[RMDB]
Source information
Conditions: 150 mM KOAc, 10 mM MgCl2 and 150 mM bicine (pH 8.5), 24 C. The record gives the reactivity of an RNA of 177 nucleotides to 2A3 and DMS. It was measured as part of the RMDB library OK1LIB. DMS adducts were read by reverse transcription with MarathonRT. For 2A3, 1,877 sequencing reads were counted.

RNA sequence: GGGAACGACUCGAGUAGAGUCGAAAACGUACUCACAGUUUAAUAUUUAAAUUCACAAUGACAUUCUCAUUCAGAGAAAGGACUGGAGACUGAAAUGUUGUGGAAAGAAAGCUCUGCGCUUGGCCAGAUGGACAAGCAUUUUCGAAUGCUUGUCCAUAAAAGAAACAACAACAACAAC
Reactivity to 2A3 in 0.01 (KOAc 150mM, MgCl2 10mM, bicine 150mM(pH8.5), 24C), signal-to-noise 5, nucleotides 027 to 126: c020g030u060a100c000u010c000a230c030a040g030u000u050u100a220a110u080a280u110u200u230a140a170a160u160u070c040a030c040a200a070u150g090a050c040a110u110u010c010u000c010a110u300u150c100a050g040a010g070a060a050a040g050g030a020c000u020g030g000a000g020a010c080u050g050a040a040a160u150g010u030u020g020u010g070g030a080a060a070g080a020a110a020g040c020u020c040u160g090c140g010c050u040u050g040g000c020c000a020g010
Reactivity to DMS in 0.01 (KOAc 150mM, MgCl2 10mM, bicine 150mM(pH8.5), 24C), signal-to-noise 5, nucleotides 027 to 126: c110g000u010a090c030u010c020a080c030a060g000u010u000u020a050a090u040a070u030u030u020a060a050a110u020u020c090a100c130a050a070u020g000a070c120a080u000u000c010u000c030a130u040u010c150a100g010a050g000a030a070a120g000g000a030c020u000g010g000a010g000a070c060u010g000a070a080a070u010g010u000u000g010u000g010g000a090a070a090g010a090a090a090g010c040u010c140u020g010c080g020c030u010u000g000g000c110c060a070g010